[RMDB]
RNA sequence: GGGAACGACUCGAGUAGAGUCGAAAAGCAAGGACUUGGAAAGCCCUUUUUUUCCUACCUCUGUACUACUGUGGGGGGAGGCUAAACUUGACUUCUUCCCAUCUUAGUUCUUUUUUGGGAUAGACUCCUGUAACAAAAGACAGACAAGAGAAAAAUCCAAGUAUGGUCUCUUCGGAGACCAUACUUGAAAAGAAACAACAACAACAAC
Reactivity to 2A3 in 0.01 (KOAc 150mM, MgCl2 10mM, bicine 150mM(pH8.5), 24C), signal-to-noise 2, nucleotides 027 to 156: g000c030a050a030g030g010a030c030u100u120g060g060a070a070a090g050c030c010c080u050u020u020u030u000u040u010c030c000u050a140c000c020u080c030u130g040u100a090c020u020a010c000u070g020u030g000g000g000g000g000g000a010g020g000c050u060a110a170a130c030u050u050g050a220c000u020u010c000u020u020c020c000c000a040u020c010u000u030a020g000u070u100c000u060u050u070u010u030u160g060g020g000a020u030a040g110a070c040u030c000c000u050g010u140a100a090c070a050a110a050a010g080a030c040a000g050a060c040a080a040g040a010g100a060a090a030a070a050u210c180
Chemical mapping of a 207-nucleotide RNA with 2A3.
The reactions ran in a buffer of 150 mM KOAc, 10 mM MgCl2 and 150 mM bicine (pH 8.5), at 24 C.
For 2A3 the reverse transcriptase was SuperScript II with manganese.
It was measured as part of the RMDB library OK3TST.